Conditions: 150 mM KOAc, 10 mM MgCl2 and 150 mM bicine (pH 8.5), 24 C. An RNA of 207 nucleotides, treated with 2A3 and DMS and read out base by base. For 2A3 the reverse transcriptase was SuperScript II with manganese. The 2A3 profile rests on 2,761 reads. Values cover nucleotides 27 to 156. The data come from the RNA Mapping Database (RMDB), library RNAMAK.
[RMDB]
RNA sequence: GGGAACGACUCGAGUAGAGUCGAAAAGCCUCUUCGGAGGCGAGCGCGGGGUCUAAGCCGCUAUAGCGACGACGUGGAGAGCUGAAGCCUCCACGGCUCUAUGAAGCAUCAGCUAUAUGCUUAGACGGAGGCACCCCCAGGCCUGCUUCGGCAGGAAAAUAAGAUUCUAGUUCGCUAGAAUCUUAUUAAAAGAAACAACAACAACAAC
Reactivity to 2A3 in 0.01 (KOAc 150mM, MgCl2 10mM, bicine 150mM(pH8.5), 24C), signal-to-noise 3, nucleotides 027 to 156: g000c030c000u000c010u000u060c240g160g010a010g020g000c030g010a070g030c240g000c060g000g110g010g010u010c000u000a000a000g010c000c010g010c020u020a010u000a000g020c020g100a140c050g010a020c030g040u010g010g000a040g020a030g030c060u280g160a300a040g010c010c000u020c000c000a000c010g020g000c000u030c020u070a300u300g180a290a000g000c020a050u110c070a010g010c010u020a010u000a010u100g000c000u000u000a000g000a010c010g000g020a010g000g000c020a030c010c000c010c000c010a020g030g090c000c000u030g000c010u070u130c190g070g000c010a010g000g000a080a070
Reactivity to DMS in 0.01 (KOAc 150mM, MgCl2 10mM, bicine 150mM(pH8.5), 24C), signal-to-noise 2, nucleotides 027 to 156: g020c000c000u000c020u000u000c260g030g030a020g000g030c030g000a030g000c080g000c040g000g010g020g010u000c010u000a010a020g010c020c040g000c030u000a030u000a060g050c010g000a140c020g030a080c030g010u020g020g010a030g000a120g080c010u000g000a210a290g010c170c000u020c000c010a040c000g000g010c020u000c050u010a170u000g020a130a170g010c100a150u010c070a170g000c040u000a060u000a020u000g000c000u000u000a030g000a060c020g010g010a150g030g030c020a070c000c000c000c000c020a140g010g010c000c000u000g020c010u000u010c190g000g020c000a030g000g000a070a050